RNA sequence: GGGAACGACUCGAGUAGAGUCGAAAAGAUAUGGAAUAUACUACCCACCUUAAUCCGACCUUUGAUCGGUGUCCUAUCGGAAACGAUAGGACACCGGGAGGUCGGUUAAGAGGUAUAUUCCUAAGUCGUAUUAUCGUAUCUUCGGAUACGAUAAUACAAAAGAAACAACAACAACAAC
Reactivity to DMS in 0.01 (KOAc 150mM, MgCl2 10mM, bicine 150mM(pH8.5), 24C), signal-to-noise 1, nucleotides 027 to 126: g010a140u030a100u020g000g000a010a020u010a010u000a000c010u000a170c040c000c010a300c170c010u010u000a010a030u020c010c000g000a020c010c000u020u000u030g000a070u000c010g000g000u010g000u000c010c000u000a000u000c000g000g000a140a080a270c030g040a010u020a000g020g010a010c000a000c000c000g010g010g010a010g000g030u010c000g000g030u000u000a000a000g010a070g020g000u000a000u010a010u020u000c000c000u020a120a090g030u010c210
Reactivity to 2A3 in 0.01 (KOAc 150mM, MgCl2 10mM, bicine 150mM(pH8.5), 24C), signal-to-noise 2, nucleotides 027 to 126: g170a070u300a260u300g000g000a010a000u010a000u010a050c020u240a280c050c000c020a020c020c000u000u010a000a010u210c050c010g010a000c030c000u210u280u140g230a200u260c040g000g000u020g000u000c000c030u030a000u010c020g120g000a230a040a030c000g000a020u010a050g020g000a000c020a010c010c000g050g000g000a010g020g000u010c010g010g000u000u000a000a010g000a000g040g060u000a000u000a000u000u010c000c020u040a100a050g300u300c180
Chemical mapping of a 177-nucleotide RNA with DMS and 2A3. The RNA was probed in 150 mM KOAc, 10 mM MgCl2 and 150 mM bicine (pH 8.5) at 24 C. The DMS profile rests on 1,165 reads. 2A3 adducts were read by reverse transcription with SuperScript II with manganese. For 2A3, 3,058 sequencing reads were counted. It was measured as part of the RMDB library TTRINS.